[RMDB]
Source information:
Source: RMDB library OK2TRN, as collected in RNAgym. The record gives the reactivity of an RNA of 177 nucleotides to 2A3 and DMS. DMS adducts were read by reverse transcription with MarathonRT. The DMS profile rests on 1,761 reads.
RNA sequence: GGGAACGACUCGAGUAGAGUCGAAAACGUAGUACAUGGUACGAUCCUGAUCACGUACCAGGAUCAUGCAUACUAGCUAGAGCACAUGGACAUGAUCAUGGUGAUCGAGUACUGCUAGGUCACAUGGAGUGAAUGUGGACUUCGGUCCACAUUCACUAAAAGAAACAACAACAACAAC
Reactivity to 2A3 in 0.01 (KOAc 150mM, MgCl2 10mM, bicine 150mM(pH8.5), 24C), signal-to-noise 3, nucleotides 027 to 126: c020g060u060a000g020u040a010c040a140u160g060g050u100a030c020g010a020u000c010c020u020g060a090u080c020a040c220g040u130a180c050c000a010g040g000a080u040c020a020u070g030c010a030u110a300c040u120a140g070c010u080a050g020a000g110c060a010c000a130u070g040g020a020c020a070u070g040a030u050c010a050u130g120g000u080g030a030u010c030g000a010g000u020a050c070u060g020c040u030a020g020g050u040c040a000c020a100u100g100g030
Reactivity to DMS in 0.01 (KOAc 150mM, MgCl2 10mM, bicine 150mM(pH8.5), 24C), signal-to-noise 2, nucleotides 027 to 126: c110g030u000a010g010u000a020c100a090u010g010g000u000a100c070g000a030u000c020c020u020g010a060u010c030a130c200g010u020a050c050c020a010g000g000a040u000c010a160u000g040c040a150u010a130c100u000a130g010c050u000a130g010a120g020c080a090c090a070u020g010g010a080c070a050u010g000a030u000c010a030u010g000g000u010g020a040u000c040g030a120g010u000a090c110u010g010c000u000a090g010g000u000c020a040c070a050u000g010g000